This 207-nucleotide RNA was probed chemically with 2A3 and DMS. Source: RMDB library M2RFOK, as collected in RNAgym. For 2A3, 2,926 sequencing reads were counted.
RNA sequence: GGGAACGACUCGAGUAGAGUCGAAAACUCUUGCACAGAAUCACCUUUCUAUAAUAACCAGUGCAAGAAGGGUUAUUAUACCAUUUAAUGUGCCGAGGCCACGCGGAGUAUGAUCGAGGGUACAGCAAAAACGUGAAGUACUUCGGUACUUCACGAACAGUGGGAUUAAGUUCGCUUAAUCCCACUGAAAAGAAACAACAACAACAAC
Reactivity to 2A3 in 0.01 (KOAc 150mM, MgCl2 10mM, bicine 150mM(pH8.5), 24C), signal-to-noise 5, nucleotides 027 to 156: c000u010c000u000u000g000c000a010c000a020g100a090a110u170c040a150c050c010u150u250u230c120u130a020u000a010a000u000a000a000c000c000a000g010u000g000c010a000a000g010a010a020g020g000g000u000u000a000u000u020a010u020a050c020c040a110u110u180u200a200a080u220g040u090g060c010c010g020a050g000g010c000c000a030c030g040c050g070g060a090g060u160a160u250g100a140u140c030g030a120g000g000g010u010a000c000a000g000c000a060a000a010a010a000c010g000u000g000a000a000g010u010a000c000u010u080c130g010g000u000a000c000u000u000c010a000c000g000a020a010
Reactivity to DMS in 0.01 (KOAc 150mM, MgCl2 10mM, bicine 150mM(pH8.5), 24C), signal-to-noise 2, nucleotides 027 to 156: c010u000c010u000u000g000c010a010c030a100g030a280a150u000c080a080c070c050u010u000u010c040u000a060u000a040a020u000a000a020c000c010a300g040u000g000c020a050a060g020a090a080g020g000g020u000u000a000u000u000a050u000a090c110c050a140u010u000u010a100a140u010g010u000g040c010c040g000a200g050g040c040c030a060c010g000c060g000g010a130g000u000a080u000g030a060u010c030g030a140g000g000g040u000a050c010a050g000c080a030a030a060a090a100c010g030u000g000a010a010g010u000a000c010u000u000c300g040g020u000a010c000u000u000c000a000c000g020a010a020